[RMDB]
RNA sequence: GGGAACGACUCGAGUAGAGUCGAAAAGAGGGCCAGGGUCCCUUCUCGUAUCUUUGACAUCACACACCUUGGGUAUUUCGGGCAUACGGGAUUGCUGGGUACCCCGGGAGGGCACCUUACGGGUCCGACUGUGGAUACCGUUCGCGGUAUCCACAGUAAAAGAAACAACAACAACAAC
Reactivity to 2A3 in 0.01 (KOAc 150mM, MgCl2 10mM, bicine 150mM(pH8.5), 24C), signal-to-noise 1, nucleotides 027 to 126: g100a060g030g030g000c020c050a000g040g040g030u070c000c000c000u030u060c010u000c010g080u030a100u080c040u080u150u190g120a100c050a100u110c040a070c030a010c010a030c150c030u150u060g000g000g000u060a070u000u120u280c110g090g000g000c040a010u020a140c040g120g060g210a100u030u070g020c040u090g020g000g010u040a020c000c000c000c020g020g000g040a020g010g000g040c080a040c020c010u000u060a070c120g060g000g010u000c010c000g000
Reactivity to DMS in 0.01 (KOAc 150mM, MgCl2 10mM, bicine 150mM(pH8.5), 24C), signal-to-noise 1, nucleotides 027 to 126: g000a140g000g010g000c020c030a100g010g000g000u000c080c010c000u000u000c000u010c040g010u010a030u010c110u000u000u010g000a110c160a080u010c120a080c070a150c180a110c110c080u000u020g040g010g020u000a060u000u000u000c070g010g000g000c060a040u010a160c120g020g000g010a110u000u010g000c060u000g000g000g000u000a050c030c040c020c010g000g000g010a060g030g000g010c190a050c000c010u000u000a170c160g000g000g010u000c000c000g010